Chemical mapping of a 207-nucleotide RNA with DMS and 2A3. High 2A3 reactivity points to a flexible backbone, as in loops and unpaired stretches.
[RMDB]
RNA sequence: GGGAACGACUCGAGUAGAGUCGAAAACUACUUAAGCUCUUAGUCUCAGUUUAUUUAUCUGAGAAGUGGGGGAACAACAACAUUGGAUAUCCAAACAAAAUGAAGCAAUGGGUGAGAUGGGAAGAGUGCUUAUAAACUGUGAGGUUGCAAAGAGCAAUCGAUCCCUAAAUUUCGAUUUAGGGAUCGAAAAAGAAACAACAACAACAAC
Reactivity to DMS in 0.01 (KOAc 150mM, MgCl2 10mM, bicine 150mM(pH8.5), 24C), signal-to-noise 1, nucleotides 027 to 156: c000u000a090c080u010u000a090a090g000c010u000c050u010u000a120g000u000c040u020c000a040g010u000u000u030a060u000u010u000a050u030c020u010g050a070g010a100a050g020u000g010g000g030g010g050a090a030c050a080a120c110a020a040c030a300u000u000g000g040a140u000a070u000c030c030a060a060a250c080a070a060a040a060u000g010a110a110g000c020a070a050u000g030g000g000u030g000a080g010a090u000g020g010g000a120a050g010a060g000u010g010c040u010u020a030u000a080a090a080c030u000g000u010g000a160g030g010u030u000g000c020a030a040a110g010a010g000c030a060a300
Reactivity to 2A3 in 0.01 (KOAc 150mM, MgCl2 10mM, bicine 150mM(pH8.5), 24C), signal-to-noise 2, nucleotides 027 to 156: c010u200a010c020u080u080a150a010g000c000u030c010u060u130a060g030u000c000u000c020a030g030u010u040u070a160u040u250u130a130u120c020u030g030a030g000a080a060g040u040g000g020g030g000g040a060a070c040a010a000c010a010a030c020a030u000u060g030g020a040u180a090u130c130c060a050a130a120c040a020a150a080a080u100g050a060a000g000c090a050a040u060g020g000g000u030g000a110g000a020u030g030g000g000a000a060g050a010g070u050g000c010u000u090a020u030a070a070a000c010u000g010u020g080a030g020g020u060u070g050c010a000a040a040g040a010g000c040a050a060
Source: RMDB library OK3TST, as collected in RNAgym. 2A3 adducts were read by reverse transcription with SuperScript II with manganese. Conditions: 150 mM KOAc, 10 mM MgCl2 and 150 mM bicine (pH 8.5), 24 C.